[RMDB]
RNA sequence: GGGAACGACUCGAGUAGAGUCGAAAAGCACUAGCGGGCGUAACGGCUGGGUGUAACCCAACUCUAGGUGUGCUGAUUAGCGGGCUUGACUCCGUAACAAAUAGGCACUGGUGGUAAAAAGCAUCCCUGACCAUAUACAUCUUCGGAUGUAUAUGAAACUUGAUGAUAGGUUCGCCUAUCAUCAAGUAAAAGAAACAACAACAACAAC
Reactivity to DMS in 0.01 (KOAc 150mM, MgCl2 10mM, bicine 150mM(pH8.5), 24C), signal-to-noise 3, nucleotides 027 to 156: g010c050a060c040u000a090g010c050g020g000g010c030g010u010a090a090c100g010g010c040u000g010g000g020u000g020u000a070a300c010c010c010a030a060c020u000c080u010a100g000g050u010g020u000g010c000u000g020a130u010u000a140g020c040g020g000g020c030u000u000g010a120c110u000c030c040g020u000a090a140c120a070a080a120u020a100g020g030c030a060c000u000g010g000u010g000g020u010a030a090a060a070a120g000c040a100u000c020c000c000u000g000a240c190c020a010u010a020u000a020c000a000u010c000u000u010c300g050g010a010u000g010u000a010u000a000u010g010a080a060
Reactivity to 2A3 in 0.01 (KOAc 150mM, MgCl2 10mM, bicine 150mM(pH8.5), 24C), signal-to-noise 4, nucleotides 027 to 156: g020c010a020c070u040a030g030c040g030g040g000c080g090u110a090a050c060g100g010c010u050g040g000g000u050g030u050a080a090c010c000c000a040a060c040u110c050u080a040g080g000u040g010u030g090c020u020g030a110u100u050a020g010c020g000g030g010c050u080u130g020a060c030u000c050c010g030u030a030a010c010a020a070a030u110a060g020g000c020a000c080u030g000g030u040g010g010u070a070a090a050a020a000g020c010a060u040c000c010c000u030g070a050c020c000a000u000a000u000a000c000a000u000c010u010u040c170g090g000a000u000g000u000a000u000a000u000g000a040a010